[RMDB]
RNA sequence: GGGAACGACUCGAGUAGAGUCGAAAAGAUAUGGAGUACUAAGUACCUAUCAGGCGUUGAAAUCGGAAACGAUGGAGCCUAGUAGGGAACUGUACUCCUAAGUCAAAGCCCUAGUUCGCUAGGGCAACCAAAUUAGAGAGUUCGCUCUCUAAUUUGGAAAAGAAACAACAACAACAAC
Reactivity to DMS in 0.01 (KOAc 150mM, MgCl2 10mM, bicine 150mM(pH8.5), 24C), signal-to-noise 5, nucleotides 027 to 126: g000a040u010a300u010g010g010a030g010u010a000c000u010a010a060g010u000a180c000c010u000a000u000c040a010g010g020c010g000u000u020g010a090a120a020u000c000g000g000a130a070a190c000g000a010u000g000g000a120g020c000c000u000a020g010u010a000g000g000g000a100a110c190u010g000u000a000c000u000c000c000u000a010a050g000u000c030a080a080a130g010c000c000c000u000a000g000u000u010c280g020c000u000a010g000g000g010c010a010a020
Reactivity to 2A3 in 0.01 (KOAc 150mM, MgCl2 10mM, bicine 150mM(pH8.5), 24C), signal-to-noise 6, nucleotides 027 to 126: g030a010u060a060u190g010g010a010g000u010a000c000u010a010a000g000u000a000c010c000u010a010u110c050a020g020g000c020g300u300u080g010a030a030a010u010c020g010g030a060a030a040c010g010a010u010g010g010a010g000c000c000u010a010g000u000a000g000g010g010a020a000c010u010g010u010a000c000u000c000c000u000a050a010g040u010c030a060a110a030g000c000c000c000u010a010g000u030u070c300g020c160u010a000g000g000g000c000a010a000